[RMDB]
Source: RMDB library OK1LIB, as collected in RNAgym. Structure probing data (2A3 and DMS) for a 177-nucleotide construct. The reactions ran in a buffer of 150 mM KOAc, 10 mM MgCl2 and 150 mM bicine (pH 8.5), at 24 C. The 2A3 profile rests on 1,266 reads.
RNA sequence: GGGAACGACUCGAGUAGAGUCGAAAAGAGUAACCAACAAUGUGAUCUUGCUUGCGGAGGCAAGACUUGCACAGUAUAAAAUCUGCAAGUAGUGCUAUUGUUGGAAAGAAUACUGUGAAGGCAACAAAAUGAGGGAUCAGUUCGCUGAUCCCUCAUUAAAAGAAACAACAACAACAAC
Reactivity to 2A3 in 0.01 (KOAc 150mM, MgCl2 10mM, bicine 150mM(pH8.5), 24C), signal-to-noise 2, nucleotides 027 to 126: g070a010g030u070a010a040c000c000a010a000c000a000a010u090g040u070g300a300u160c060u060u070g010c000u000u080g000c000g030g120a000g000g040c080a130a000g000a040c000u000u040g000c000a000c000a010g040u010a010u090a150a090a010a040u000c010u000g010c020a000a000g000u010a000g060u010g110c010u020a000u000u000g000u000u000g020g030a040a000a020g000a000a030u010a040c010u010g020u050g140a040a030g080g000c030a060a040c070a060a270
Reactivity to DMS in 0.01 (KOAc 150mM, MgCl2 10mM, bicine 150mM(pH8.5), 24C), signal-to-noise 2, nucleotides 027 to 126: g000a100g030u010a080a220c030c000a000a000c030a000a000u000g020u010g010a140u110c100u060u020g000c020u000u000g010c000g050g020a020g020g020c190a100a060g010a070c070u000u010g000c100a030c060a030g000u010a030u030a070a000a080a140u000c020u000g000c000a020a000g000u000a020g010u000g040c060u020a000u020u000g000u000u020g010g010a040a020a120g000a160a020u000a030c030u010g030u000g000a070a090g050g000c130a050a050c090a050a040